RNA sequence: GGGAACGACUCGAGUAGAGUCGAAAAAUAGGCUUAUCAAGAGAGGUGGAGGAACUGGCCCGAUGAAACCCGGCAGCCAGAAAUGGUGCCAAUUCCUGCAGCGGAAACGUUGAAAGAUGAGCCGAUGACGCCACAGGCUUCGGCCUGUGGAAAAGAAACAACAACAACAAC
Reactivity to 2A3 in 0.01 (KOAc 150mM, MgCl2 10mM, bicine 150mM(pH8.5), 24C), signal-to-noise 4, nucleotides 027 to 129: a020u150a020g000g000c020u040u020a010u030c100a120a000g130a040g040a100g110g060u060g050g090a060g010g020a020a030c020u030g000g010c020c030c010g040a060u170g110a030a040a050c010c000c000g020g020c030a020g030c000c000a010g040a010a020a050u100g040g000u030g000c000c000a010a000u030u000c030c000u040g020c010a010g040c000g020g010a060a020a010c030g060u030u050g020a050a020a020g020a000u020g000a010g010c000c000g020a010u030g030a010c020g040
Reactivity to DMS in 0.01 (KOAc 150mM, MgCl2 10mM, bicine 150mM(pH8.5), 24C), signal-to-noise 4, nucleotides 027 to 129: a050u060a120g050g000c020u020u050a000u000c070a140a050g000a000g020a080g080g030u050g020g020a060g040g010a240a100c060u040g050g040c010c030c030g050a160u090g030a080a100a100c180c110c000g000g000c300a070g000c000c050a040g010a090a040a050u000g040g010u020g000c000c010a010a010u010u010c020c020u000g030c020a020g030c030g030g000a040a080a070c030g040u060u010g020a050a050a040g000a020u010g020a030g030c020c010g020a030u040g030a110c160g010